[RMDB]
RNA sequence: GGGAACGACUCGAGUAGAGUCGAAAAGAAAGGAGUGAUUCUGACAUUUAUGAAUUUGUGAUAUUAUGUACUGAAAUUAUGACCUGAUUGUAUAUUUCUCCCUAGUCUGCAUAUAGGGAGGUUAUUCAGCCCUUCCACCUUCUGCCAUGGGAUGGCAGUCCGUACGCCUCUUCGGAGGCGUACGGACAAAAGAAACAACAACAACAAC
Reactivity to 2A3 in 0.01 (KOAc 150mM, MgCl2 10mM, bicine 150mM(pH8.5), 24C), signal-to-noise 1, nucleotides 027 to 156: g060a000a010a060g150g030a000g030u160g000a100u010u010c000u020g040a060c000a050u100u140u080a140u130g150a270a070u090u290u130g060u040g040a060u030a030u210u130a000u090g010u030a210c000u000g030a000a060a060u060u140a050u120g040a060c000c000u000g010a030u040u110g050u060a090u010a030u050u060u090c000u000c010c010c010u010a050g100u030c180u060g160c100a130u250a000u000a080g000g000g000a000g000g000u000u000a040u020u130c030a010g000c020c020c000u000u060c000c000a040c000c080u160u200c040u050g030c000c030a070u030g000g040g170a030u030g000g010c050a000